Source: RMDB library OK2TRN, as collected in RNAgym.
Chemical mapping of a 177-nucleotide RNA with 2A3 and DMS.
For 2A3, 9,909 sequencing reads were counted.
Reactivities are rounded to 0.1 and cut off at 0 and 3.
The DMS profile rests on 16,599 reads.
For DMS the reverse transcriptase was MarathonRT.
[RMDB]
RNA sequence: GGGAACGACUCGAGUAGAGUCGAAAACUUUGCGCCAGAAGGUUUUCACUAUAUUGGAGCGAUAUGGAAUCAUAACUCAAGUCUCAACUGGGUAGAUGGUUCUGCGUGGGACUACAGUAAAAUUGAAGCCUAAAUAGGUAUUCGUACCUAUUUAGGCAAAAGAAACAACAACAACAAC
Reactivity to 2A3 in 0.01 (KOAc 150mM, MgCl2 10mM, bicine 150mM(pH8.5), 24C), signal-to-noise 6, nucleotides 027 to 126: c010u040u030u150g050c080g040c020c050a040g030a040a060g030g000u010u010u050u060c020a020c010u070a030u020a040u200u100g100g020a030g030c030g020a040u040a070u260g030g020a010a020u030c010a020u030a060a020c010u010c070a130a050g090u010c050u020c150a060a160c030u020g020g000g000u030a090g040a160u020g010g020u020u000c000u020g000c040g040u070g030g050g020a030c020u080a050c080a070g110u140a030a060a070a060u110u130g080a100a020
Reactivity to DMS in 0.01 (KOAc 150mM, MgCl2 10mM, bicine 150mM(pH8.5), 24C), signal-to-noise 9, nucleotides 027 to 126: c020u000u000u000g010c080g010c080c090a070g010a080a050g000g010u000u000u000u000c020a070c030u000a060u000a050u000u000g010g010a040g010c030g010a120u010a060u010g000g000a040a020u000c010a020u000a090a030c020u000c010a050a070g010u000c180u020c230a090a080c060u000g000g000g010u000a070g010a040u000g010g010u000u000c010u000g010c130g020u000g010g010g010a100c050u000a060c090a060g010u010a040a040a060a120u010u010g010a130a160